[RMDB]
RNA sequence: GGGAACGACUCGAGUAGAGUCGAAAACGUGCGUACUGGGCCGCCGGCACAAUGUUCUACCCAGCCGUCUCAGAGGGCGCGGUUCGACCACGAUCAGCCAGCGGGUCAGCGGGGUCCUCCUAGCUAGACGAUCAUUUAUGUUCGCAUAAAUGAUCGUAAAAGAAACAACAACAACAAC
Reactivity to DMS in 0.01 (KOAc 150mM, MgCl2 10mM, bicine 150mM(pH8.5), 24C), signal-to-noise 4, nucleotides 027 to 126: c090g010u010g020c060g030u000a070c050u000g020g000g010c100c060g020c050c050g000g000c050a070c100a100a090u000g010u010u000c070u000a110c070c010c040a220g010c040c020g010u000c030u010c080a140g000a090g020g000g010c020g040c160g000g000u000u000c120g020a060c040c040a080c070g000a070u010c110a120g000c020c040a060g010c040g010g010g000u000c030a060g010c060g020g000g010g020u000c010c030u000c020c050u000a070g000c100u000a100g000
Reactivity to 2A3 in 0.01 (KOAc 150mM, MgCl2 10mM, bicine 150mM(pH8.5), 24C), signal-to-noise 2, nucleotides 027 to 126: c010g040u110g000c040g080u130a060c020u040g040g000g000c020c020g030c030c020g030g000c040a030c020a060a140u120g010u130u030c030u070a060c010c000c030a000g030c020c010g150u010c040u020c080a060g020a120g070g020g020c060g000c050g020g000u040u050c050g000a020c010c010a070c110g030a100u080c020a020g030c020c010a020g040c030g040g020g110u030c010a010g000c030g020g020g000g000u030c000c010u020c000c010u020a030g030c020u050a040g010
An RNA of 177 nucleotides, treated with DMS and 2A3 and read out base by base.
The RNA was probed in 150 mM KOAc, 10 mM MgCl2 and 150 mM bicine (pH 8.5) at 24 C.
For DMS the reverse transcriptase was MarathonRT.
For 2A3, 3,481 sequencing reads were counted.